Notes
An RNA of 177 nucleotides, treated with DMS and 2A3 and read out base by base. The RNA was probed in 150 mM KOAc, 10 mM MgCl2 and 150 mM bicine (pH 8.5) at 24 C.
[RMDB]
RNA sequence: GGGAACGACUCGAGUAGAGUCGAAAAAUACAUUUGUAUCUAGCACAGGAAGUGUGCAAAGUUACGCCUUUAUAAGAUAUGAUGUGUGAGACCUGUAGGGAAUGCGUUGGAGCUCAAACUCUGUAAACUACUCUGAUGUGUUCGCACAUCAGAGUAGAAAAGAAACAACAACAACAAC
Reactivity to DMS in 0.01 (KOAc 150mM, MgCl2 10mM, bicine 150mM(pH8.5), 24C), signal-to-noise 4, nucleotides 027 to 126: a050u010a040c040a060u030u010u020g040u020a000u000c010u000a180g020c010a000c040a040g030g020a130a130g020u010g010u000g000c010a020a040a070g010u020u020a070c170g000c160c020u000u000u020a090u020a120a070g010a050u020a030u010g010a020u000g000u000g020u000g010a100g020a090c010c000u000g000u010a040g000g010g000a070a020u010g000c120g010u000u020g000g000a040g000c040u000c110a100a060a180c030u000c030u010g010u020a030a060a150
Reactivity to 2A3 in 0.01 (KOAc 150mM, MgCl2 10mM, bicine 150mM(pH8.5), 24C), signal-to-noise 6, nucleotides 027 to 126: a000u090a020c030a030u090u090u200g010u010a010u000c020u040a050g040c030a010c000a020g210g270a290a110g210u050g020u000g040c000a040a030a010g050u090u070a050c080g050c010c010u080u130u030a150u050a150a020g020a010u070a010u090g030a010u010g060u010g020u010g020a020g030a070c000c000u010g020u020a030g020g040g000a050a090u090g020c010g040u050u090g040g010a040g000c010u020c070a020a030a050c030u020c010u040g110u190a050a070a040